Record summary:
The record gives the reactivity of an RNA of 177 nucleotides to DMS and 2A3. For 2A3 the reverse transcriptase was SuperScript II with manganese. It was measured as part of the RMDB library OK2TRN. For DMS, 935 sequencing reads were counted. For 2A3, 733 sequencing reads were counted. The RNA was probed in 150 mM KOAc, 10 mM MgCl2 and 150 mM bicine (pH 8.5) at 24 C.
[RMDB]
RNA sequence: GGGAACGACUCGAGUAGAGUCGAAAAACUGGGGUGGCGAACUCUACAUCACAGGAGUGGGGUCUGAUGUUUCUGAGUGCCGGCGUAUUACCUGCACAAACCCCGAAACCCUGACCAACCCCGCAUGCCAUUCUUGGUUGUUCGCAACCAAGAAUGGAAAAGAAACAACAACAACAAC
Reactivity to DMS in 0.01 (KOAc 150mM, MgCl2 10mM, bicine 150mM(pH8.5), 24C), signal-to-noise 2, nucleotides 027 to 126: a110c170u020g020g020g000g070u010g030g000c050g000a120a040c070u000c080u010a060c050a040u000c130a130c190a130g010g010a050g050u000g010g000g000g000u000c080u000g010a070u000g000u000u000u000c040u000g000a120g010u000g000c000c080g000g060c080g000u010a080u000u010a060c040c000u000g000c020a010c000a090a130a190c030c020c040c040g000a060a080a080c040c140c020u000g020a100c040c030a160a120c010c000c000c030g000c240a080u010g000
Reactivity to 2A3 in 0.01 (KOAc 150mM, MgCl2 10mM, bicine 150mM(pH8.5), 24C), signal-to-noise 1, nucleotides 027 to 126: a000c050u140g010g020g000g000u040g010g080c020g000a040a020c020u000c040u070a050c040a210u160c060a020c050a120g090g000a020g050u070g000g100g010g000u050c080u100g110a120u070g140u020u170u000c060u070g040a020g040u000g000c050c050g000g000c020g010u070a020u030u300a120c000c000u020g000c010a010c010a030a100a050c000c020c020c010g010a070a000a000c030c020c040u050g030a060c020c020a080a080c000c000c010c000g000c020a080u100g050